Source information:
Chemical mapping of a 207-nucleotide RNA with 2A3. For 2A3, 357 sequencing reads were counted.

RNA sequence: GGGAACGACUCGAGUAGAGUCGAAAACUCACUCUUAGCAUAUAGGAGCCAUCCUAUCGACUUCCAAGAGUGAGGGAUGGGAUAUCGCACACCUUCUAACUCACUCUGAACGGAUGGGAGUGAGGAUUAUUCUGUCAGUUAUCGUGCUAAGGUCCUGGUAGAACCUUCUCUUCGGAGAAGGUUCUACAAAAGAAACAACAACAACAAC
Reactivity to 2A3 in 0.01 (KOAc 150mM, MgCl2 10mM, bicine 150mM(pH8.5), 24C), signal-to-noise 1, nucleotides 027 to 156: c000u000c000a000c030u080c000u050u210a070g010c080a090u160a020u080a160g090g000a140g050c060c030a080u050c000c000u060a100u200c100g140a160c100u150u120c050c030a000a000g000a080g000u000g000a020g000g050g000a030u160g050g000g000a000u030a030u210c060g050c090a070c000a000c050c020u090u040c020u040a180a000c000u000c060a010c010u020c030u010g140a150a090c190g070g120a140u120g020g000g000a000g000u000g010a000g000g000a020u080u000a150u180u120c030u070g120u120c040a040g040u000u080a010u180c030g050u060g000c050u020a060a000g050g050u050c000c070u060g090